[RMDB]
This 177-nucleotide RNA was probed chemically with DMS. The DMS profile rests on 1,019 reads. For DMS the reverse transcriptase was MarathonRT.

RNA sequence: GGGAACGACUCGAGUAGAGUCGAAAAGGGCCCCCCCAUAAGAUGGCAGGAACCCACUCAUUGGGGUCCGCUGUUCCAUUCUUUCUUACCUUGUGGCCGACAUGGUCCCAGCCUCCUCGCUGGCGCCCAGUAAGAGGUGGUUCGCCACCUCUUACUGAAAAGAAACAACAACAACAAC
Reactivity to DMS in 0.01 (KOAc 150mM, MgCl2 10mM, bicine 150mM(pH8.5), 24C), signal-to-noise 1, nucleotides 027 to 126: g010g000g020c000c010c000c010c000c000c010a100u010a020a030g000a030u020g000g000c040a060g030g000a030a050c000c000c010a090c270u030c280a190u010u010g000g000g010g000u000c000c000g050c090u000g020u010u030c020c050a050u000u020c030u000u000u010c120u010u010a140c070c070u000u000g020u010g020g010c080c030g030a100c090a070u000g000g040u020c270c020c010a050g020c040c020u000c020c010u020c080g010c020u020g010g010c150g020c040c030